[RMDB]
RNA sequence: GGGAACGACUCGAGUAGAGUCGAAAAUUGUACAUUUAGCGGAGUUGUCCGCGGAACGCAUCAACAAGAGCGUAUUACAGUUCCUGUCCUUAUCUCUCGGCAAACUUGUCAGCGAUGUGGACGGAUCGCUGGUGGGUAUUAUGCAAGCAUCGUGCAAUAUAGAUGAUGAUUUCGAUCAUCAUCUAUAAAAAGAAACAACAACAACAAC
Reactivity to DMS in 0.01 (KOAc 150mM, MgCl2 10mM, bicine 150mM(pH8.5), 24C), signal-to-noise 3, nucleotides 027 to 156: u000u010g040u000a040c050a090u010u000u000a090g020c010g020g010a060g010u000u000g000u000c000c000g000c000g010g040a030a020c010g040c020a050u010c040a050a040c040a050a100g000a070g010c030g060u000a120u000u000a080c090a110g010u000u000c000c000u000g020u000c010c040u000u000a070u010c040u000c020u000c030g020g000c030a080a100a080c070u000u000g030u000c010a030g000c050g020a040u010g030u000g010g010a060c050g000g000a050u000c010g030c020u000g000g010u000g010g010g020u000a060u000u000a060u000g020c030a050a140g010c060a090u000c080g000u010g010c050a110a280
Reactivity to 2A3 in 0.01 (KOAc 150mM, MgCl2 10mM, bicine 150mM(pH8.5), 24C), signal-to-noise 7, nucleotides 027 to 156: u060u040g040u060a030c050a080u090u150u180a020g000c010g000g020a030g030u030u040g070u070c010c000g010c000g000g000a030a000c010g020c010a120u060c050a100a180c030a200a040g030a010g060c020g030u060a100u050u150a030c030a010g020u010u020c000c010u080g050u070c010c010u090u130a090u050c050u000c020u030c070g050g000c040a080a120a150c090u060u030g010u030c000a000g000c000g020a010u010g030u090g100g010a020c020g010g020a010u000c010g000c010u010g000g030u030g010g000g020u060a080u180u050a060u140g040c030a030a050g020c000a060u110c060g070u070g060c030a090a020

The data come from the RNA Mapping Database (RMDB), library OK3TST. This 207-nucleotide RNA was probed chemically with DMS and 2A3. 2A3 adducts were read by reverse transcription with SuperScript II with manganese. Reactivities are given for positions 27 through 156. The 2A3 profile rests on 6,605 reads.